[RMDB]
RNA sequence: GGGAACGACUCGAGUAGAGUCGAAAAAUUUUAAAGUUUCUGUUAGUGAUGAAUCAGGGAAUCACACUUUUAAGAAAUACAACACAUUGUUUGGAGACAUUUUUGAUCAAUUAGGGGUGGAAUAUGACCAUUACGUCGGAUUCGUCCGACGUAAUGGAAAAGAAACAACAACAACAAC
Reactivity to DMS in 0.01 (KOAc 150mM, MgCl2 10mM, bicine 150mM(pH8.5), 24C), signal-to-noise 1, nucleotides 027 to 126: a090u020u000u020u000a090a100a170g020u000u000u010c000u010g000u010u010a050g010u000g010a140u010g020a080a040u020c060a120g020g000g000a140a140u000c020a020c010a010c040u000u010u000u010a100a010g020a010a050a020u000a050c070a040a010c130a060c080a090u010u010g010u000u000u000g000g000a130g000a130c090a040u000u010u000u000u010g000a040u010c110a060a070u010u000a070g010g020g000g010u010g000g000a060a030u000a040u000g020a190
Reactivity to 2A3 in 0.01 (KOAc 150mM, MgCl2 10mM, bicine 150mM(pH8.5), 24C), signal-to-noise 1, nucleotides 027 to 126: a010u230u210u080u130a020a150a070g000u070u000u000c010u010g090u140u050a030g000u000g120a270u030g000a110a060u040c040a080g160g040g060a070a030u040c000a000c010a020c120u030u020u000u140a130a070g000a010a000a000u090a030c020a060a000c020a040c060a180u040u040g110u060u000u010g110g000a070g000a000c000a010u050u000u020u020u100g090a090u110c030a000a030u040u040a130g000g010g060g000u020g020g010a000a060u070a000u060g030a030
Chemical mapping of a 177-nucleotide RNA with DMS and 2A3.
Conditions: 150 mM KOAc, 10 mM MgCl2 and 150 mM bicine (pH 8.5), 24 C.
2A3 adducts were read by reverse transcription with SuperScript II with manganese.
High 2A3 reactivity points to a flexible backbone, as in loops and unpaired stretches.
DMS adducts were read by reverse transcription with MarathonRT.